[RMDB]
RNA sequence: GGGAACGACUCGAGUAGAGUCGAAAAAUCCUUCAAUUUGCGAUAUCAUGAAGGUCGGCGAAUACAUCUACCUCUACGAUGGUAUGAUCAGAGCCCGUGUUACAGCUGUCUCUUCCGAGAAGAUCGACAGAACCAUCGAGUUCGCUCGAUGGUUCUGAAAAGAAACAACAACAACAAC
Reactivity to 2A3 in 0.01 (KOAc 150mM, MgCl2 10mM, bicine 150mM(pH8.5), 24C), signal-to-noise 1, nucleotides 027 to 126: a010u010c010c000u030u010c030a130a190u080u070u210g040c010g020a050u000a020u170c100a110u100g020a030a010g000g000u000c090g050g060c010g040a100a010u070a130c000a040u010c000u030a030c040c000u000c050u120a100c120g060a040u080g000g100u060a040u220g050a040u020c000a020g010a030g150c000c030c020g060u000g000u080u020a170c100a060g030c010u060g020u110c050u020c000u120u120c040c030g100a090g030a120a050g050a020u000c020g020a010
Reactivity to DMS in 0.01 (KOAc 150mM, MgCl2 10mM, bicine 150mM(pH8.5), 24C), signal-to-noise 1, nucleotides 027 to 126: a060u000c000c000u000u000c060a120a100u000u020u010g010c120g020a140u000a110u010c130a080u020g010a040a050g020g010u010c180g000g040c040g020a100a130u000a060c100a020u000c010u010a100c040c000u010c130u090a170c280g010a040u000g000g000u000a020u010g040a010u020c070a080g000a210g040c010c010c120g010u000g000u000u010a050c150a150g000c020u000g050u000c000u000c040u010u000c090c100g000a170g010a070a090g010a070u000c090g020a170